Source information: Structure probing data (2A3 and DMS) for a 177-nucleotide construct. The 2A3 profile rests on 2,837 reads. The RNA was probed in 150 mM KOAc, 10 mM MgCl2 and 150 mM bicine (pH 8.5) at 24 C.
RNA sequence: GGGAACGACUCGAGUAGAGUCGAAAAUUUCGCGGAUACGCUCGACCACUUCGCGGUACAGCGCCACGUCGCGGCUGGGCUUGCCGGUGGCGGGGUCGCGGACAUGGCAGUGGGCGACGGUGGCGCAAUGGAUGAUGGUGUUCGCACCAUCAUCCAUAAAAGAAACAACAACAACAAC
Reactivity to 2A3 in 0.01 (KOAc 150mM, MgCl2 10mM, bicine 150mM(pH8.5), 24C), signal-to-noise 2, nucleotides 027 to 126: u030u080u100c040g020c010g050g020a050u090a150c050g000c080u040c040g090a110c030c020a010c060u070u060c030g000c050g080g030u050a090c050a090g000c000g020c000c000a010c010g020u010c000g000c000g040g000c000u050g000g120g080c050u080u100g030c000c030g190g060u080g010g040c060g020g030g030g020u050c050g000c000g030g000a030c000a040u040g030g000c020a010g010u050g040g190g040c020g010a010c000g040g050u060g020g020c030g030c010a010
Reactivity to DMS in 0.01 (KOAc 150mM, MgCl2 10mM, bicine 150mM(pH8.5), 24C), signal-to-noise 2, nucleotides 027 to 126: u010u010u010c040g020c020g000g020a100u020a070c100g000c090u000c060g000a100c020c030a040c090u000u010c090g000c030g000g010u010a100c180a130g020c020g000c010c010a010c000g010u000c010g030c000g010g000c020u000g000g010g040c070u010u010g010c010c010g010g040u010g050g000c020g030g000g020g020u000c030g000c000g000g020a040c060a030u000g010g000c040a050g030u000g010g010g010c030g010a030c040g030g000u000g020g010c010g000c040a090